[RMDB]
RNA sequence: GGGAACGACUCGAGUAGAGUCGAAAACAGGCUGGUCUCUAGCCUACUUUUUUGAGACAAGGUCUUGCUCUGUCACCCAGGCUGGAUAGAGUGCAGUAGUGCAGUCACAGCUCACUGCAGCCUCCACCUAUCGCCACGUUUUCGAACGUGGCGAUAGAAAAGAAACAACAACAACAAC
Reactivity to 2A3 in 0.01 (KOAc 150mM, MgCl2 10mM, bicine 150mM(pH8.5), 24C), signal-to-noise 3, nucleotides 027 to 126: c080a000g000g020c000u040g000g000u040c020u000c000u050a000g030c010c010u110a180c120u200u200u150u020u110u090g020a040g000a020c020a000a070g070g000u000c030u040u030g000c050u060c070u070g100u080c010a100c050c000c000a010g050g000c030u030g050g000a070u040a110g060a030g020u130g000c020a020g010u200a010g030u020g030c070a010g060u060c090a070c010a120g020c000u000c010a010c000u010g000c000a070g050c000c020u000c020c000a080c000

This 177-nucleotide RNA was probed chemically with 2A3. For 2A3, 1,211 sequencing reads were counted. Reactivities are given for positions 27 through 126. The data come from the RNA Mapping Database (RMDB), library OK1LIB. Conditions: 150 mM KOAc, 10 mM MgCl2 and 150 mM bicine (pH 8.5), 24 C.